Annotation:
An RNA of 207 nucleotides, treated with DMS and 2A3 and read out base by base. Reactivities are given for positions 27 through 156. Values are in units of 0.01, from 0 to 300, in steps of 10.
RNA sequence: GGGAACGACUCGAGUAGAGUCGAAAACGAUGUCAUCGACAACACCCUAUGCAUUCAUGCUCUGUAAGGAUGCGCCGAAAGGUGAGCAAGCCCGAGUUGCCCAGACCUGAAAUGCAACACUUUAGAGAAAACCCGAAGCAGUUCGCUGCUUCGGGAACAGAUGUAACGUGUUCGCACGUUACAUCUGAAAAGAAACAACAACAACAAC
Reactivity to DMS in 0.01 (KOAc 150mM, MgCl2 10mM, bicine 150mM(pH8.5), 24C), signal-to-noise 2, nucleotides 027 to 156: c090g010a070u000g010u020c060a190u000c060g000a130c050a110a080c060a080c040c020c080u000a120u000g010c050a050u000u000c050a210u010g040c030u000c060u000g020u020a200a240g030g000a020u000g020c000g010c000c030g020a130a090a150g020g020u000g000a080g000c050a130a230g040c040c020c010g020a120g060u010u000g000c000c010c020a190g000a070c030c040u000g000a050a090a090u000g000c030a030a060c090a110c060u000u000u000a060g020a120g000a080a040a050a150c010c000c010g000a010a050g000c010a030g000u000u000c300g060c030u000g000c010u000u000c000g030g020g000a010a030
Reactivity to 2A3 in 0.01 (KOAc 150mM, MgCl2 10mM, bicine 150mM(pH8.5), 24C), signal-to-noise 3, nucleotides 027 to 156: c050g010a050u100g090u170c080a150u110c180g050a040c030a140a030c020a120c020c010c000u040a030u060g000c010a000u000u030c030a050u160g030c030u020c000u040g070u040a040a020g030g000a020u020g000c000g010c000c000g080a100a050a020g000g000u040g010a010g020c050a040a040g010c000c010c020g060a050g060u040u070g040c040c000c020a010g010a070c000c040u040g040a070a030a060u100g020c010a060a020c030a050c090u120u170u190a120g020a010g000a050a100a010a050c000c010c000g000a000a000g000c010a000g000u050u190c200g050c140u000g000c000u000u000c000g000g010g000a000a000